[RMDB]
RNA sequence: GGGAACGACUCGAGUAGAGUCGAAAAGUUUGGCAGACGUAAAAAAGGAGGCAACAAUUAACCCGUAUCGGCUCGCGGUGCAGCAGUGUGGAGACCUGUUGUAAUACCUUCGUCACAUAUGCGGGCGAGUUCACAACUACUUCGGUAGUUGUGAACUAAAAGAAACAACAACAACAAC
Reactivity to DMS in 0.01 (KOAc 150mM, MgCl2 10mM, bicine 150mM(pH8.5), 24C), signal-to-noise 2, nucleotides 027 to 126: g020u000u020u000g000g000c030a030g000a070c040g000u030a000a020a090a070a080a100g000g000a070g030g000c040a080a020c080a070a050u040u030a160a100c070c020c000g020u020a090u030c030g000g000c010u000c060g030c080g030g020u010g020c060a050g000c020a050g030u000g010u000g000g000a050g030a040c160c010u000g000u010u000g000u000a110a070u010a050c040c030u010u010c040g000u000c030a020c040a110u000a210u010g010c110g030g030g000c000g010
Reactivity to 2A3 in 0.01 (KOAc 150mM, MgCl2 10mM, bicine 150mM(pH8.5), 24C), signal-to-noise 4, nucleotides 027 to 126: g050u040u080u100g050g000c060a030g040a050c040g050u150a010a000a010a080a090a130g060g010a030g020g070c000a060a010c000a100a110u120u100a080a050c010c000c000g030u050a080u100c050g020g000c030u050c020g000c030g040g030u050g000c010a000g000c010a020g020u030g000u060g210g060a040g020a070c010c000u010g020u020u000g020u000a100a060u090a130c000c000u030u070c010g030u020c000a000c020a110u140a010u150g010c030g010g000g010c020g020